[RMDB]
RNA sequence: GGGAACGACUCGAGUAGAGUCGAAAAUUGUUUGUGUCCUCCUUUAUUUCAUUGAGCAGUGGUUUGUAAUUCUCCUUGAAGAGGUCCUUCACAUCCCUUGUAAGUUGGAUUCCUAGGUAUUUUAUUCUCUUUGUAGGAAUUGUGAAUGGGAGUUCACGAAAUCUUCCUUUUUCGAAAGGAAGAUUUCAAAAGAAACAACAACAACAAC
Reactivity to DMS in 0.01 (KOAc 150mM, MgCl2 10mM, bicine 150mM(pH8.5), 24C), signal-to-noise 1, nucleotides 027 to 156: u020u010g000u020u000u020g000u000g020u000c010c040u000c020c040u000u000u010a050u030u000u010c010a100u000u010g000a120g030c030a070g030u010g010g040u000u000u010g020u000a050a100u000u000c020u000c030c020u000u000g000a060a060g000a060g000g030u000c010c010u010u010c020a040c060a110u010c010c000c040u010u040g020u010a040a110g040u000u000g030g010a090u010u010c050c020u000a090g030g020u010a050u010u010u010u000a060u030u020c020u000c040u000u010u000g010u000a060g040g000a050a050u010u000g010u000g010a050a050u010g020g010g020a110g010u000u000c020a050c120
Reactivity to 2A3 in 0.01 (KOAc 150mM, MgCl2 10mM, bicine 150mM(pH8.5), 24C), signal-to-noise 2, nucleotides 027 to 156: u040u030g030u000u030u090g050u000g020u010c000c000u020c040c020u110u230u130a170u120u220u070c070a020u050u080g020a010g060c030a030g020u070g000g120u150u170u140g060u100a120a170u120u040c020u000c070c000u050u050g030a010a020g010a050g070g000u030c010c010u010u080c010a060c010a070u020c000c010c000u010u040g120u100a130a150g000u090u040g070g000a010u000u030c010c000u020a020g010g050u020a060u050u200u070u030a060u200u110c000u000c000u070u110u110g080u100a030g000g050a010a020u070u110g020u010g020a030a040u010g000g040g000a010g000u010u030c010a010c010
The record gives the reactivity of an RNA of 207 nucleotides to DMS and 2A3. For DMS, 4,231 sequencing reads were counted. The reactions ran in a buffer of 150 mM KOAc, 10 mM MgCl2 and 150 mM bicine (pH 8.5), at 24 C. For DMS the reverse transcriptase was MarathonRT. For 2A3 the reverse transcriptase was SuperScript II with manganese. It was measured as part of the RMDB library OK3TST. The 2A3 profile rests on 611 reads.